[RMDB]
RNA sequence: GGGAACGACUCGAGUAGAGUCGAAAAAUCAUACUGUUGUCUUAACCUUCAAUGAGUCAAUAUCGUUAGGCUCAUCUGACACCUGACGCACUCGUUCAGACAACAGUAUGUGUACGGUCCUUCAAUCAGGUGUCAGAUGAGCCUGAUAGAAGGACAAUCCGUAGGAUUAGUUCGCUAAUCCUACGGAAAAAGAAACAACAACAACAAC
Reactivity to 2A3 in 0.01 (KOAc 150mM, MgCl2 10mM, bicine 150mM(pH8.5), 24C), signal-to-noise 3, nucleotides 027 to 156: a000u080c000a000u000a000c000u000g000u010u000g000u030c000u030u030a030a040c070c050u190u180c140a110a300u220g020a100g030u060c040a080a130u030a130u170c040g020u060u050a000g000g000c000u000c010a020u010c000u010g010a000c010a000c000c010u030g040a070c070g040c170a130c090u160c080g030u040u000c040a000g010a000c000a000a000c000a000g000u000a000u000g000u010g000u010a080c110g040g080u080c000c000u050u140c070a080a170u040c000a000g030g020u000g020u000c000a000g000a000u010g000a010g040c000c000u000g000a000u000a010g010a000a050g070g010a010c010a020a110
Reactivity to DMS in 0.01 (KOAc 150mM, MgCl2 10mM, bicine 150mM(pH8.5), 24C), signal-to-noise 1, nucleotides 027 to 156: a090u000c010a030u010a000c040u000g010u000u000g010u010c000u010u000a070a090c040c080u020u010c070a090a050u020g000a110g020u000c040a120a090u000a090u010c050g030u000u000a020g030g020c000u010c030a030u010c030u010g000a080c050a020c030c010u000g020a030c030g000c100a070c070u000c120g010u010u010c060a090g010a020c000a000a020c030a040g020u000a010u000g000u010g020u000a030c150g030g000u000c000c060u010u000c050a100a070u000c000a020g010g040u000g000u000c030a080g030a030u000g000a090g000c000c000u020g010a010u000a070g010a080a030g000g000a040c070a080a210
The record gives the reactivity of an RNA of 207 nucleotides to 2A3 and DMS. 2A3 adducts were read by reverse transcription with SuperScript II with manganese. The RNA was probed in 150 mM KOAc, 10 mM MgCl2 and 150 mM bicine (pH 8.5) at 24 C. The DMS profile rests on 3,523 reads. 2A3 is a SHAPE reagent: it acylates the 2'-hydroxyl of flexible nucleotides of all four kinds.